RNA sequence: GGGAACGACUCGAGUAGAGUCGAAAAGUCAUAAUGUUCUUUACAUUUCAAUGGAAAUGGCAGAAGAAGUCUGUGCUAAGCGUAUUGACGCUAAUAUGCUCGAUGUUUCUCUUGAUGACAUUGAUGAUGGGCAUAUUUCUUACGCUGAAUAUAAAGGCACUACGUAUAAAUUCGUUUAUACGUAGUGAAAAGAAACAACAACAACAAC
Reactivity to 2A3 in 0.01 (KOAc 150mM, MgCl2 10mM, bicine 150mM(pH8.5), 24C), signal-to-noise 3, nucleotides 027 to 156: g050u040c020a040u060a160a050u120g030u060u030c020u040u080u090a050c020a040u030u040u050c110a170a190u170g090g010a050a030a010u040g030g020c060a030g010a070a010g020a020a010g070u020c070u060g070u050g020c030u070a040a020g000c000g010u020a050u070u130g060a040c070g000c090u000a010a020u010a010u020g000c000u000c020g040a030u030g060u010u090u000c100u020c000u050u210g100a110u110g010a060c010a040u030u110g070a090u090g030a070u150g100g000g000c000a000u010a010u020u030u000c010u010u000a000c020g000c010u010g010a050a010u140a020u060a060a090a020g070g000
Reactivity to DMS in 0.01 (KOAc 150mM, MgCl2 10mM, bicine 150mM(pH8.5), 24C), signal-to-noise 6, nucleotides 027 to 156: g020u000c050a080u000a090a080u010g010u000u000c030u000u000u000a080c020a030u000u000u000c030a220a180u010g020g010a020a020a030u000g010g010c090a090g010a050a060g010a070a080g010u000c050u000g020u000g000c060u010a100a070g020c010g030u000a080u000u010g010a120c180g020c060u000a030a030u000a030u000g010c000u000c030g010a090u000g000u000u000u000c030u000c140u000u010g020a140u000g000a050c030a090u000u000g010a120u010g020a150u010g020g000g000c010a030u000a040u000u000u000c030u010u000a030c020g020c010u000g010a070a100u000a100u000a070a090a190g000g010

This 207-nucleotide RNA was probed chemically with 2A3 and DMS. Reactivities are rounded to 0.1 and cut off at 0 and 3. Values cover nucleotides 27 to 156. The reactions ran in a buffer of 150 mM KOAc, 10 mM MgCl2 and 150 mM bicine (pH 8.5), at 24 C.